[RMDB]
RNA sequence: GGGAACGACUCGAGUAGAGUCGAAAACAAAGCCUCAGUCUCUUCCACUUUCAUGAGUAAACCAUGUAAGGAAAGAUCUUGAAUCCUAGCUUCAAUUGCCAAGUCACGUUGUUCUACCUUCGCUGGCAGCUGCCUUUUAAUUCGUUAAAAGGCAGCUAAAAGAAACAACAACAACAAC
Reactivity to 2A3 in 0.01 (KOAc 150mM, MgCl2 10mM, bicine 150mM(pH8.5), 24C), signal-to-noise 3, nucleotides 027 to 126: c000a020a080a020g060c000c020u050c020a010g040u030c010u030c000u040u000c050c030a120c060u040u060u040c060a090u000g070a050g110u180a070a030a040c040c020a020u030g060u080a040a020g000g010a070a090a030g050a040u030c020u000u110g030a000a030u020c020c030u050a020g010c020u140u090c050a070a100u090u060g020c010c000a080a010g050u040c030a010c120g050u050u050g000u070u010c020u120a060c010c020u040u080c040g060c090u040g010g000c010
Reactivity to DMS in 0.01 (KOAc 150mM, MgCl2 10mM, bicine 150mM(pH8.5), 24C), signal-to-noise 3, nucleotides 027 to 126: c050a110a090a110g010c040c030u010c030a030g010u000c040u000c020u000u010c050c060a170c050u000u010u000c060a020u020g000a130g000u020a070a080a100c140c010a020u030g010u020a060a050g020g000a050a070a070g010a040u030c050u000u020g000a040a060u010c030c020u010a030g030c060u000u000c060a020a070u020u030g020c020c000a050a050g010u010c050a070c100g020u020u020g010u000u000c050u010a080c090c030u000u010c100g000c030u000g010g010c120

Annotation
An RNA of 177 nucleotides, treated with 2A3 and DMS and read out base by base. Source: RMDB libraries RFM100 and RFMREP, as collected in RNAgym.